[RMDB]
RNA sequence: GGGAACGACUCGAGUAGAGUCGAAAAGCGCUCCUGAUCGUGACAUCAGAAGAGGGGCGCCGACAAGUUAGAUUGUCGAGGCGACAAAUUGGUCAGUCUGGGCAAUCUAACUGACCAAUCGCCGGCGCGUUGAGUCACGUCAACAACCCUCGAGCGAGGGCGUACUACUAUUCGUAGUAGUACGCCCAAAAGAAACAACAACAACAAC
Reactivity to 2A3 in 0.01 (KOAc 150mM, MgCl2 10mM, bicine 150mM(pH8.5), 24C), signal-to-noise 3, nucleotides 027 to 156: g040c080g000c040u030c020c000u040g020a080u090c060g080u110g070a080c030a160u120c060a090g260a300a010g000a130g000g020g020g010c000g010c000c000g020a020c000a000a030g000u010u000a000g000a020u010u030g010u050c060g060a010g000g000c000g000a000c030a080a300a290u210u110g190g000u010c100a110g010u000c080u060g060g020g000c000a000a000u000c000u000a000a000c000u000g000a020c000c040a050a080u080c090g000c020c000g020g000c040g000c020g020u020u060g030a010g020u070c040a020c080g040u040c020a010a050c010a020a070c010c030c020u020c040g000a040g010c080g020a140
Reactivity to DMS in 0.01 (KOAc 150mM, MgCl2 10mM, bicine 150mM(pH8.5), 24C), signal-to-noise 1, nucleotides 027 to 156: g030c030g000c010u030c000c010u000g000a060u000c010g040u010g010a090c040a200u000c060a200g000a060a100g000a060g010g020g050g010c020g030c040c010g050a040c030a070a070g000u020u000a010g010a010u000u000g050u000c010g010a050g050g000c010g000a050c000a110a120a290u020u000g090g060u000c030a080g060u000c020u010g030g070g000c030a020a020u000c000u000a030a010c010u000g020a120c170c120a060a100u000c060g040c010c020g010g020c010g000c050g050u000u010g000a170g020u020c130a090c120g050u000c030a010a080c010a080a180c020c000c010u000c020g000a150g040c060g010a130
Chemical mapping of a 207-nucleotide RNA with 2A3 and DMS. For 2A3, 1,255 sequencing reads were counted. It was measured as part of the RMDB library OK3TST. The DMS profile rests on 2,488 reads. DMS adducts were read by reverse transcription with MarathonRT.